[RMDB]
RNA sequence: GGGAACGACUCGAGUAGAGUCGAAAAGAUAUGGACCAUCGUAUUAAGAGGUCGGAAACGACUACCCACCUUGGGUACGAGUGGUCCUAAGUCAAAAGCCAUCAUAUAGUUCGCUAUAUGAUGGCAAGAAUGAGGAAGGGUUCGCCCUUCCUCAUUCAAAAGAAACAACAACAACAAC
Reactivity to 2A3 in 0.01 (KOAc 150mM, MgCl2 10mM, bicine 150mM(pH8.5), 24C), signal-to-noise 3, nucleotides 027 to 126: g010a010u060a020u140g020g020a000c000c000a000u010c000g000u000a010u040u160a230a110g030a010g060g030u060c230g010g040a180a190a040c260g140a100c170u170a110c030c020c020a030c010c000u070u060g150g000g050u010a010c000g030a120g290u130g000g030u000c010c000u020a080a020g050u030c040a030a000a230a020g020c000c000a000u000c000a000u000a000u010a000g030u030u050c300g000c200u000a000u000a000u000g010a000u010g000g020c000a000a000
Reactivity to DMS in 0.01 (KOAc 150mM, MgCl2 10mM, bicine 150mM(pH8.5), 24C), signal-to-noise 4, nucleotides 027 to 126: g010a030u000a300u000g010g020a010c000c000a060u000c000g000u000a010u000u000a160a120g000a050g000g010u000c200g030g020a100a090a120c100g000a050c120u020a120c040c000c030a280c080c030u000u000g010g010g000u000a010c010g000a020g020u000g010g000u000c000c000u010a010a080g010u000c040a070a110a080a130g010c000c000a000u000c000a000u000a010u000a000g020u000u010c280g030c000u000a000u000a010u000g000a010u000g010g010c000a000a010
Notes:
An RNA of 177 nucleotides, treated with 2A3 and DMS and read out base by base. For 2A3 the reverse transcriptase was SuperScript II with manganese. The data come from the RNA Mapping Database (RMDB), library TTRDEL. Reactivities are rounded to 0.1 and cut off at 0 and 3. The reactions ran in a buffer of 150 mM KOAc, 10 mM MgCl2 and 150 mM bicine (pH 8.5), at 24 C.